Chemical mapping of a 177-nucleotide RNA with DMS and 2A3. DMS (dimethyl sulfate) methylates the pairing face of unpaired adenines and cytosines.
[RMDB]
RNA sequence: GGGAACGACUCGAGUAGAGUCGAAAAGAUAUGGAAUGUUCCAACAGCCACCCAUCGGAAACGAUGGAGUGGACAUGGACAUUCCUAAGUCAAAACGACAGAAGAAGGUUCGCCUUCUUCUGUCGAAGUAUUAAAAUCUGUUCGCAGAUUUUAAUACAAAAGAAACAACAACAACAAC
Reactivity to DMS in 0.01 (KOAc 150mM, MgCl2 10mM, bicine 150mM(pH8.5), 24C), signal-to-noise 4, nucleotides 027 to 126: g000a030u000a280u010g000g010a020a000u000g000u010u010c000c010a020a100c300a210g000c000c000a010c000c000c000a010u000c000g000g010a060a050a090c000g020a020u000g000g010a100g020u000g000g000a030c090a100u000g000g000a040c000a020u000u010c000c010u000a010a090g010u000c010a090a080a110a190c020g000a010c010a010g000a010a010g010a010a000g000g010u000u020c260g000c000c000u000u000c000u000u000c000u000g010u000c000g010a000a040
Reactivity to 2A3 in 0.01 (KOAc 150mM, MgCl2 10mM, bicine 150mM(pH8.5), 24C), signal-to-noise 4, nucleotides 027 to 126: g010a010u030a020u100g000g000a020a010u020g070u300u180c030c010a050a030c080a150g090c020c000a000c000c010c000a010u000c010g000g020a080a010a020c000g010a010u010g000g090a070g000u010g020g040a010c010a040u020g000g000a000c000a000u000u000c000c010u000a040a010g030u000c010a000a010a100a190c020g000a000c000a010g000a000a000g010a000a000g050g010u080u210c270g150c010c000u000u010c000u000u000c000u010g000u000c000g000a000a010